Chemical mapping of a 177-nucleotide RNA with 2A3 and DMS. Values are in units of 0.01, from 0 to 300, in steps of 10. The DMS profile rests on 2,309 reads. The RNA was probed in 150 mM KOAc, 10 mM MgCl2 and 150 mM bicine (pH 8.5) at 24 C.

RNA sequence: GGGAACGACUCGAGUAGAGUCGAAAAUCUUCACCAUUGGUCAAGCACAAACUACUCUAUUAUUGGAAAUUAACUGGGCUACCGCUUCCUGAUGAAUGUGACUUCGACCACCUCAUUCUCAGCCGACACUAGCAUCAUUGUUCGCAAUGAUGCUAGUAAAAGAAACAACAACAACAAC
Reactivity to 2A3 in 0.01 (KOAc 150mM, MgCl2 10mM, bicine 150mM(pH8.5), 24C), signal-to-noise 3, nucleotides 027 to 126: u010c000u100u090c060a090c120c020a110u040u140g020g010u040c010a010a000g040c020a030c030a080a160a030c020u090a060c030u040c040u070a120u230u060a130u160u160g060g060a050a030a110u140u040a160a090c060u100g000g030g000c000u060a110c020c000g060c000u040u000c000c020u020g060a090u060g050a110a090u060g020u040g110a170c000u010u030c040g040a030c010c010a010c010c000u090c000a070u120u000c030u010c030a030g080c020c040g080a060c020
Reactivity to DMS in 0.01 (KOAc 150mM, MgCl2 10mM, bicine 150mM(pH8.5), 24C), signal-to-noise 3, nucleotides 027 to 126: u010c060u000u010c050a150c090c080a140u010u000g030g020u000c020a040a070g000c040a050c070a100a110a150c050u000a080c060u020c030u010a080u020u000a110u000u000g010g000a030a070a080u010u000a040a130c090u000g010g010g000c070u000a060c110c050g000c070u000u000c020c020u000g000a060u010g020a070a080u020g020u000g020a070c040u000u000c120g010a030c040c040a100c060c020u010c040a070u010u000c010u000c030a100g020c040c040g000a070c230